An RNA of 207 nucleotides, treated with DMS and 2A3 and read out base by base. The reactions ran in a buffer of 150 mM KOAc, 10 mM MgCl2 and 150 mM bicine (pH 8.5), at 24 C. For 2A3 the reverse transcriptase was SuperScript II with manganese.
RNA sequence: GGGAACGACUCGAGUAGAGUCGAAAAGAUCUGCGCCGAUCCGAAACGCUAGCAAACAGCCCGCAUCAUGUCGUCUCCUAACUUCGACCUGGUGAAAUACUGAGCUUAUGCGAGUAAGCCUGUUAGCAAUAGAUCAGAACGUUCGCGUUCUGAUCAACCCAUUGACUCGUUUCGACGAGUCAAUGGGAAAAGAAACAACAACAACAAC
Reactivity to DMS in 0.01 (KOAc 150mM, MgCl2 10mM, bicine 150mM(pH8.5), 24C), signal-to-noise 1, nucleotides 027 to 156: g020a090u000c070u020g000c020g100c020c040g000a110u020c040c010g010a120a100a120c020g000c050u000a000g030c030a050a040a070c090a200g030c030c030c040g040c010a050u000c030a120u000g010u010c040g010u000c060u040c050c000u000a090a090c110u010u000c020g010a040c040c050u000g000g000u000g000a090a110a120u000a060c040u000g020a130g030c000u010u000a090u000g000c130g000a230g000u010a080a040g000c000c050u000g010u000u000a110g030c040a090a090u000a080g010a020u000c000a030g010a010a020c000g030u010u000c300g040c040g020u010u020c010u000g020a000u000c010a030a090
Reactivity to 2A3 in 0.01 (KOAc 150mM, MgCl2 10mM, bicine 150mM(pH8.5), 24C), signal-to-noise 4, nucleotides 027 to 156: g040a030u030c020u110g020c040g030c020c050g030a060u050c010c030g060a060a020a030c070g020c030u030a030g010c030a070a070a070c050a060g030c020c030c010g030c000a030u040c010a000u030g020u020c010g030u010c030u040c110c060u130a150a130c080u050u040c010g010a020c000c000u010g000g000u030g070a050a020a030u160a040c060u030g010a010g030c000u000u010a010u060g110c050g020a060g050u020a030a000g000c020c000u050g030u070u060a040g020c040a070a160u030a210g010a010u000c000a010g010a010a000c000g020u060u040c160g000c020g100u000u000c010u000g010a000u000c000a000a010